[RMDB]
RNA sequence: GGGAACGACUCGAGUAGAGUCGAAAAUAAUUUGGAAGAAACUGUGAGUUCAUGACUGAGGGCAUUGUUGAACACAAUGGAGAUCACCAAAUGAGCAAUUAAGAAGAGACUUGUAGCUCUCUGAUACCCAUAACAAAAAGCAAAAUUGUAGAUGAGACCCGUAAUAUUAUUUCGAUAAUAUUACGGGAAAAGAAACAACAACAACAAC
Reactivity to 2A3 in 0.01 (KOAc 150mM, MgCl2 10mM, bicine 150mM(pH8.5), 24C), signal-to-noise 2, nucleotides 027 to 156: u070a010a030u030u040u060g040g000a070a050g050a060a110a010c020u010g000u040g060a010g020u040u040c040a030u100g040a040c040u050g040a080g020g060g020c000a010u060u050g030u030u060g060a030a010c050a010c020a020a030u040g000g030a110g010a050u020c020a030c060c020a000a010a130u100g000a030g040c020a040a060u110u080a140a060g050a050a010g000a010g000a040c010u090u070g050u110a020g020c010u000c000u000c020u010g000a000u030a070c020c000c000a040u050a060a030c020a010a050a050a030a000g160c050a000a210a090a020u190u070g020u060a030g030a090u100g040a000g020a040
Reactivity to DMS in 0.01 (KOAc 150mM, MgCl2 10mM, bicine 150mM(pH8.5), 24C), signal-to-noise 2, nucleotides 027 to 156: u010a120a130u000u000u010g000g070a180a180g020a150a070a090c020u010g010u000g010a100g060u000u030c000a040u000g000a070c090u000g030a150g030g040g000c040a120u000u010g030u000u030g000a050a130c070a060c040a100a070u000g010g000a120g010a100u010c010a080c060c080a040a070a090u020g000a110g040c020a030a070u000u010a050a080g000a070a050g010a080g010a060c050u000u010g020u000a130g010c010u000c000u000c030u010g000a140u000a030c000c000c000a080u000a060a140c070a040a020a020a050a080g000c040a060a020a060a150u000u000g000u000a070g010a130u000g000a130g000a170